Chemical mapping of a 207-nucleotide RNA with 2A3 and DMS. The reactions ran in a buffer of 150 mM KOAc, 10 mM MgCl2 and 150 mM bicine (pH 8.5), at 24 C. 2A3 adducts were read by reverse transcription with SuperScript II with manganese. Source: RMDB library OK3TST, as collected in RNAgym. Reactivities are given for positions 27 through 156.

RNA sequence: GGGAACGACUCGAGUAGAGUCGAAAACUCGGCAGACCUGCGCAAGGGCCUGAAGGUCAAGCGCGAGCGCAGCUGGAGCAGCCCGAAGACGUUGGGCGACGUGCUCACCGACAUUGCCCUCGGCAACAACCUGAAGCCGGUGCUCGCGCCGGCGCUGAACUACCUCUAUGUUCGCAUAGAGGUAGUUAAAAGAAACAACAACAACAAC
Reactivity to 2A3 in 0.01 (KOAc 150mM, MgCl2 10mM, bicine 150mM(pH8.5), 24C), signal-to-noise 3, nucleotides 027 to 156: c000u010c000g050g010c020a040g030a200c020c000u040g000c030g020c060a040a190g060g020g000c040c020u220g140a170a080g000g000u040c030a030a020g010c030g010c000g110a050g010c030g000c020a070g030c020u100g100g050a010g020c020a000g010c000c000c000g010a060a040g130a060c130g090u150u070g010g000g030c010g020a070c100g090u110g050c010u010c030a060c030c030g050a060c040a120u070u080g000c000c010c000u020c000g010g000c000a080a060c010a060a080c070c050u080g060a060a010g000c000c030g020g010u030g010c030u040c030g030c020g000c000c000g010g000c020g010c020u060g030
Reactivity to DMS in 0.01 (KOAc 150mM, MgCl2 10mM, bicine 150mM(pH8.5), 24C), signal-to-noise 1, nucleotides 027 to 156: c000u000c030g000g000c030a090g020a090c040c020u000g000c070g040c110a100a190g020g050g030c000c030u010g040a160a140g050g040u010c020a170a170g020c010g000c050g000a040g020c060g010c060a060g030c000u020g020g010a170g030c020a170g010c070c020c010g090a140a230g010a050c040g040u000u000g030g040g030c040g000a060c070g010u010g020c030u000c060a070c000c000g040a090c040a060u010u040g030c010c020c030u000c090g000g010c020a100a070c020a110a080c040c020u010g010a070a130g000c040c030g030g000u000g030c060u010c210g020c010g020c000c020g020g040c070g000c020u000g010